This 177-nucleotide RNA was probed chemically with DMS and 2A3. For 2A3 the reverse transcriptase was SuperScript II with manganese. As a SHAPE reagent, 2A3 marks flexible, mostly unpaired nucleotides at the ribose 2'-OH. The reactions ran in a buffer of 150 mM KOAc, 10 mM MgCl2 and 150 mM bicine (pH 8.5), at 24 C. The DMS profile rests on 1,979 reads.

RNA sequence: GGGAACGACUCGAGUAGAGUCGAAAAUUAGAGGACGAAAAGCCAUCAACAUGAAGACUCAUCGGAUUGACUUGGUUGCUCUUAUAUUGAAGAUAUUAUAUUUGCCAGGACAACUUGGUGGGCCAGGACAUCACAGUCGAUUCGUCGACUGUGAUGUAAAAGAAACAACAACAACAAC
Reactivity to DMS in 0.01 (KOAc 150mM, MgCl2 10mM, bicine 150mM(pH8.5), 24C), signal-to-noise 2, nucleotides 027 to 126: u010u020a120g010a080g010g030a050c020g000a070a050a110a130g000c060c010a060u000c050a040a110c140a050u000g010a070a130g000a050c020u000c030a050u000c040g000g000a090u000u000g000a070c020u000u000g000g030u000u000g030c130u000c070u000u000a050u000a070u010u020g010a070a140g000a100u010a040u000u010a050u000a090u000u000u010g010c050c020a030g000g000a080c060a020a020c040u010u000g010g030u000g000g000g000c020c040a100g010g010
Reactivity to 2A3 in 0.01 (KOAc 150mM, MgCl2 10mM, bicine 150mM(pH8.5), 24C), signal-to-noise 2, nucleotides 027 to 126: u100u090a020g050a060g110g020a020c050g110a010a000a090a050g090c060c050a110u110c020a040a050c000a060u130g160a120a030g010a070c000u010c000a000u020c040g040g000a100u050u030g040a020c000u000u010g040g000u040u080g030c020u010c020u130u050a080u040a110u130u080g040a120a030g030a090u080a050u300u010a090u030a090u150u090u110g020c000c010a010g000g020a050c000a040a000c070u060u040g020g000u010g000g000g000c000c010a020g030g040